[RMDB]
RNA sequence: GGGAACGACUCGAGUAGAGUCGAAAAUUUUCUGUCGCAGCAAAACUCAUAAAAGGUGCUAAUAUGAUUUUAAUCGAUUUUCAAUAAAGCACAAGCCUGGACGCGCGAACUAGGCAAAUCGAACAAAACAAUGGUGUAGUUUCGACUACACCAUUGUAAAAGAAACAACAACAACAAC
Reactivity to 2A3 in 0.01 (KOAc 150mM, MgCl2 10mM, bicine 150mM(pH8.5), 24C), signal-to-noise 1, nucleotides 027 to 126: u080u060u020u000c000u050g150u060c030g030c050a060g000c010a020a040a110a170c040u160c110a090u140a140a110a030a030g160g020u000g000c010u000a070a080u130a100u120g000a000u000u000u000u200a080a120u140c050g070a030u070u140u000u000c070a090a110u110a180a000a000g000c000a000c050a080a000g000c010c000u020g000g000a060c040g050c000g000c030g090a110a070c030u020a000g000g020c000a020a000a000u050c060g020a060a030c010a060a080a000
Reactivity to DMS in 0.01 (KOAc 150mM, MgCl2 10mM, bicine 150mM(pH8.5), 24C), signal-to-noise 2, nucleotides 027 to 126: u010u000u010u010c020u000g010u010c050g010c040a050g010c090a050a070a090a010c130u010c090a110u010a050a050a120a080g000g010u000g000c020u000a060a090u010a100u010g000a120u000u000u000u000a030a040u000c020g000a010u000u000u000u000c040a010a070u000a040a040a090g000c030a000c020a120a030g010c060c020u010g000g010a090c050g020c060g000c090g000a020a170c040u010a040g000g040c040a030a040a010u020c020g000a010a200c250a040a020a080

Chemical mapping of a 177-nucleotide RNA with 2A3 and DMS. The data come from the RNA Mapping Database (RMDB), library M2PK90. Conditions: 150 mM KOAc, 10 mM MgCl2 and 150 mM bicine (pH 8.5), 24 C.